[RMDB]
RNA sequence: GGGAACGACUCGAGUAGAGUCGAAAAGAUAUGGACUAAGCUCUUUUGACGUAGCCGGGUCGGAAACGACCCUGCUACGAUAAGAGCUAAGUCCUAAGUCAAACCGUACCCCUUCGGGGGUACGGAACUACAACAUUUCCUUCGGGAAAUGUUGUAGAAAAGAAACAACAACAACAAC
Reactivity to DMS in 0.01 (KOAc 150mM, MgCl2 10mM, bicine 150mM(pH8.5), 24C), signal-to-noise 2, nucleotides 027 to 126: g000a010u000a090u000g000g010a020c000u000a100a020g010c010u000c000u000u000u000u020g020a180c070g030u000a000g030c010c170g000g000g010u000c010g010g000a010a020a030c000g020a020c000c000c000u000g000c000u010a010c010g020a030u000a010a020g010a020g000c010u020a030a010g000u000c000c000u000a010a060g000u000c020a120a090a160c020c000g000u010a020c010c000c000c000u000u020c210g050g020g000g020g020u000a000c000g000g020a020a050
Reactivity to 2A3 in 0.01 (KOAc 150mM, MgCl2 10mM, bicine 150mM(pH8.5), 24C), signal-to-noise 2, nucleotides 027 to 126: g030a000u060a000u070g000g010a000c010u030a060a040g000c000u010c050u090u130u220u300g300a240c100g000u010a000g010c000c000g000g000g030u000c010g000g030a020a030a020c000g000a000c020c020c000u000g000c000u010a000c010g000a000u000a000a000g000a000g000c000u000a000a010g000u000c010c000u000a040a000g030u020c020a090a090a110c010c000g000u000a000c010c020c010c050u000u110c300g110g010g020g040g000u000a000c000g000g000a020a000
The data come from the RNA Mapping Database (RMDB), library TTRDEL. This 177-nucleotide RNA was probed chemically with DMS and 2A3. For DMS, 1,972 sequencing reads were counted. 2A3 adducts were read by reverse transcription with SuperScript II with manganese. Conditions: 150 mM KOAc, 10 mM MgCl2 and 150 mM bicine (pH 8.5), 24 C.